Structure probing data (2A3 and DMS) for a 177-nucleotide construct. The 2A3 profile rests on 2,449 reads. DMS adducts were read by reverse transcription with MarathonRT. For 2A3 the reverse transcriptase was SuperScript II with manganese. Source: RMDB library M2PK50, as collected in RNAgym.
RNA sequence: GGGAACGACUCGAGUAGAGUCGAAAACCUUGGUCCUUCGGGACCAAGGAAACCCCAAGACAUACAGACUGUGGGCGGCGAGACAAUCCACAAGAGUCGCUAAAAGCGUCUGGUUCGCCAGACGCAACCUGGUUUUAUUGUUCGCAAUAAAACCAGGAAAAGAAACAACAACAACAAC
Reactivity to 2A3 in 0.01 (KOAc 150mM, MgCl2 10mM, bicine 150mM(pH8.5), 24C), signal-to-noise 2, nucleotides 027 to 126: c000c000u000u000g040g000u010c000c030u030u040c180g100g000g000a010c010c000a000a000g000g000a050a040a010c010c000c000c000a020a050g070a050c030a040u280a030c030a060g140a050c050u050g000u050g050g000g000c060g030g000c070g040a040g010a050c050a030a050u010c020c020a010c010a030a070g060a010g030u040c000g010c070u110a050a050a040a050g010c000g000u020c000u010g040g010u030u010c210g040c030c010a000g020a000c000g000c000a000a010
Reactivity to DMS in 0.01 (KOAc 150mM, MgCl2 10mM, bicine 150mM(pH8.5), 24C), signal-to-noise 2, nucleotides 027 to 126: c000c000u000u000g010g000u000c000c000u000u010c170g010g000g010a030c000c000a000a000g000g010a020a030a100c090c010c010c070a130a150g000a100c060a120u030a120c080a120g000a120c070u000g000u000g000g020g010c300g060g000c020g030a150g010a180c070a080a110u010c080c010a020c120a120a040g030a060g010u000c000g000c090u000a010a030a070a100g020c000g000u000c000u000g000g000u000u000c220g010c010c000a000g000a030c000g000c000a020a020